[RMDB]
RNA sequence: GGGAACGACUCGAGUAGAGUCGAAAAGCGCACUCUGUGUCACAUCGAUAUAUCCAGCCUCAUGUGAUGACAAUUUGUAAGCUUGCUAGAAUAAGGGGGAGCUUCGCUUAUCCAUGCGGCAACUAUCCGUGGUCUUAUAGUUCGCUAUAAGACCACGAAAAGAAACAACAACAACAAC
Reactivity to 2A3 in 0.01 (KOAc 150mM, MgCl2 10mM, bicine 150mM(pH8.5), 24C), signal-to-noise 2, nucleotides 027 to 126: g030c030g020c020a000c030u200c060u120g040u000g030u050c010a020c020a140u110c060g060a000u000a000u020a030u170c050c050a040g000c000c020u000c000a010u020g130u190g040a010u010g020a000c020a040a140u060u090u210g120u170a020a010g010c010u030u160g060c040u130a120g150a300a260u230a210a170g110g030g000g040g000a000g000c000u040u040c030g040c040u060u000a010u000c000c010a000u000g000c040g000g000c020a000a020c010u070a040u070c070
Reactivity to DMS in 0.01 (KOAc 150mM, MgCl2 10mM, bicine 150mM(pH8.5), 24C), signal-to-noise 2, nucleotides 027 to 126: g000c070g000c110a040c030u000c070u000g010u010g010u030c050a060c130a040u000c070g050a090u000a090u000a090u020c100c110a140g020c000c080u010c020a040u010g000u020g000a030u000g020a040c110a090a110u010u010u050g000u000a010a040g020c010u000u000g000c050u020a130g010a180a160u000a110a050g030g010g010g020g010a050g000c020u000u010c160g020c130u000u000a040u010c020c000a040u000g030c090g010g000c030a040a070c110u000a050u000c090
This 177-nucleotide RNA was probed chemically with 2A3 and DMS. Source: RMDB library RFMREP, as collected in RNAgym. The DMS profile rests on 1,000 reads. For 2A3, 1,773 sequencing reads were counted. DMS adducts were read by reverse transcription with MarathonRT. The RNA was probed in 150 mM KOAc, 10 mM MgCl2 and 150 mM bicine (pH 8.5) at 24 C.